Source information
Chemical mapping of a 207-nucleotide RNA with 2A3 and DMS. 2A3 adducts were read by reverse transcription with SuperScript II with manganese. For DMS the reverse transcriptase was MarathonRT.
[RMDB]
RNA sequence: GGGAACGACUCGAGUAGAGUCGAAAAUGUAGCCAUCCGAAACGUACGGGUUACAGUGCUAGAUUCUGACCACACCUAGCGCUCUAGCAAUAGAUAUCGCGGUUGUAUCGCGCGGAGAUGUAGUGCUUAUGAGUGUCUAGAUAGACGUCAUCUCACGAUCUACUUGUAGUUUCGACUACAAGUAGAUAAAAGAAACAACAACAACAAC
Reactivity to 2A3 in 0.01 (KOAc 150mM, MgCl2 10mM, bicine 150mM(pH8.5), 24C), signal-to-noise 9, nucleotides 027 to 156: u110g020u030a000g000c020c020a060u060c070c030g110a130a140a130c190g070u270a060c060g050g010g010u060u080a050c060a060g030u070g070c040u040a040g000a120u130u050c050u120g040a030c020c000a030c020a020c050c010u000a000g000c000g000c000u010c010u020a010g000c010a050a000u030a090g110a070u070a040u110c020g000c020g020g080u080u150g180u200a170u140c090g000c010g000c010g190g040a180g000a040u070g040u160a060g050u020g040c020u170u110a090u290g000a010g020u020g030u050c000u010a010g010a050u050a030g060a040c050g010u030c010a050u020c020u020c020a040c080g050
Reactivity to DMS in 0.01 (KOAc 150mM, MgCl2 10mM, bicine 150mM(pH8.5), 24C), signal-to-noise 5, nucleotides 027 to 156: u000g020u000a020g020c020c010a050u000c010c020g010a110a140a130c050g020u000a040c030g010g000g010u000u010a030c050a050g020u010g000c030u000a080g000a120u000u000c080u000g010a090c000c030a150c220a030c030c010u000a030g010c020g040c020u000c020u000a060g020c030a040a050u000a040g000a060u000a030u000c020g010c020g000g000u000u000g030u010a100u010c090g030c010g010c030g030g020a040g010a040u000g020u000a040g020u000g020c010u000u000a080u010g040a050g020u000g020u000c030u000a040g010a050u000a070g010a120c060g000u000c020a110u010c020u000c030a150c110g000